[RMDB]
This 177-nucleotide RNA was probed chemically with 2A3 and DMS. Values cover nucleotides 27 to 126. The DMS profile rests on 1,446 reads. The 2A3 profile rests on 742 reads. DMS adducts were read by reverse transcription with MarathonRT. The data come from the RNA Mapping Database (RMDB), library OK1LIB. 2A3 adducts were read by reverse transcription with SuperScript II with manganese.

RNA sequence: GGGAACGACUCGAGUAGAGUCGAAAAGAUAGAUCACAAGGACCUCGAGCAAUUCAAGAAAGAUGUAUUAGAGAAGAAUGUAGAAACGUUCCUUUAUGUGAAUUCUUCGAACUUAAUUGACAUGCACACUCAGUCACGUUUUCGAACGUGACUGAGUAAAAGAAACAACAACAACAAC
Reactivity to 2A3 in 0.01 (KOAc 150mM, MgCl2 10mM, bicine 150mM(pH8.5), 24C), signal-to-noise 2, nucleotides 027 to 126: g060a020u170a000g050a000u050c110a010c010a040a060g070g000a090c000c000u020c000g000a000g000c070a110a140u160u160c070a040a130g110a180a020a000g090a110u160g000u130a100u010u210a010g050a000g000a170a000g000a010a010u090g010u170a160g140a000a100a000c020g030u040u010c000c000u010u030u040a030u030g210u050g120a020a000u000u000c000u000u000c010g020a120a000c010u000u060a050a100u130u020g010a000c000a000u040g050c080a060c010
Reactivity to DMS in 0.01 (KOAc 150mM, MgCl2 10mM, bicine 150mM(pH8.5), 24C), signal-to-noise 2, nucleotides 027 to 126: g030a110u010a070g010a110u060c010a060c050a050a060g000g020a130c210c010u000c070g000a030g010c050a010a050u020u000c070a050a010g070a190a100a070g000a080u070g000u070a050u010u030a150g000a240g010a040a010g000a000a000u030g050u050a050g000a070a050a210c050g000u020u010c020c020u000u080u000a010u060g000u010g000a070a000u000u000c000u000u000c000g020a070a070c130u050u000a060a110u040u000g010a070c050a050u020g050c090a100c180